This 177-nucleotide RNA was probed chemically with 2A3 and DMS.
The DMS profile rests on 2,744 reads.
It was measured as part of the RMDB library OK2TRN.
For 2A3, 3,288 sequencing reads were counted.
The reactions ran in a buffer of 150 mM KOAc, 10 mM MgCl2 and 150 mM bicine (pH 8.5), at 24 C.
Values cover nucleotides 27 to 126.
RNA sequence: GGGAACGACUCGAGUAGAGUCGAAAAAAGACGGGCACGGAUCCUUAUCAGCUUCGGGCCGCGAUCGAGCGAGCCGAAGCCGAGGGCACGCUUCGUCGUGGGUCAGCAGCUGAGCUACGCGCUGCGCGUUGCGUACUCUCUUCGGAGAGUACGCAACAAAAGAAACAACAACAACAAC
Reactivity to 2A3 in 0.01 (KOAc 150mM, MgCl2 10mM, bicine 150mM(pH8.5), 24C), signal-to-noise 2, nucleotides 027 to 126: a000a000g060a020c030g000g000g000c030a010c070g110g040a070u080c020c000u060u080a120u090c030a000g000c000u010u020c010g170g070g170c030c010g000c000g040a130u170c110g010a020g010c000g010a020g000c000c000g030a020a010g050c000c010g000a040g000g000g000c010a000c060g000c000u210u210c010g000u010c020g000u060g100g040g050u030c060a030g000c010a000g000c010u060g060a020g040c070u110a050c070g010c000g010c060u050g000c040g020c060
Reactivity to DMS in 0.01 (KOAc 150mM, MgCl2 10mM, bicine 150mM(pH8.5), 24C), signal-to-noise 3, nucleotides 027 to 126: a110a040g010a050c040g010g000g010c030a080c100g020g010a110u020c050c020u010u010a120u000c030a040g030c000u000u000c000g020g000g030c010c000g020c000g010a090u000c300g010a120g010c010g000a060g000c010c000g010a020a020g030c040c060g000a050g000g000g000c140a170c070g000c020u010u000c110g040u010c020g000u000g000g020g010u000c090a080g010c080a020g000c020u000g000a070g010c100u010a060c100g000c080g000c040u000g010c040g020c200